[RMDB]
The record gives the reactivity of an RNA of 177 nucleotides to 2A3 and DMS. DMS (dimethyl sulfate) methylates the pairing face of unpaired adenines and cytosines.

RNA sequence: GGGAACGACUCGAGUAGAGUCGAAAAAAGCACAACCAGUAGAAGUACCUGUUGAAGAUAUUGCGCAGGUUGUCAUAGCUGACACCUUACAGGAAACUCCUGUUGUGCCUGAUACUGUUGAAGUCCCGUGUACUAGAUUGUUCGCAAUCUAGUACACAAAAGAAACAACAACAACAAC
Reactivity to 2A3 in 0.01 (KOAc 150mM, MgCl2 10mM, bicine 150mM(pH8.5), 24C), signal-to-noise 3, nucleotides 027 to 126: a010a000g010c010a020c010a030a000c100c050a030g010u080a040g100a280a020g010u040a030c010c010u010g020u080u070g070a090a020g050a120u100a120u260u300g050c140g000c060a020g000g010u060u110g000u020c010a020u090a110g070c110u050g030a000c000a010c000c000u010u010a000c000a000g030g000a140a110a000c010u000c010c000u000g010u020u010g000u010g000c000c000u010g010a010u030a130c050u070g130u170u050g050a040a010g030u000c000c010c000
Reactivity to DMS in 0.01 (KOAc 150mM, MgCl2 10mM, bicine 150mM(pH8.5), 24C), signal-to-noise 3, nucleotides 027 to 126: a110a110g000c010a000c020a020a020c160c150a040g000u000a130g000a100a090g000u000a130c010c000u000g000u000u010g010a100a110g010a140u000a100u010u010g040c150g020c150a040g010g030u010u000g010u000c030a030u000a180g010c270u000g000a000c010a040c010c010u000u010a020c020a000g000g000a090a080a060c050u000c010c000u000g000u000u000g000u000g010c040c010u000g010a090u000a060c060u010g010u020u000g010a080a070g010u000c000c030c020

For 2A3, 3,077 sequencing reads were counted.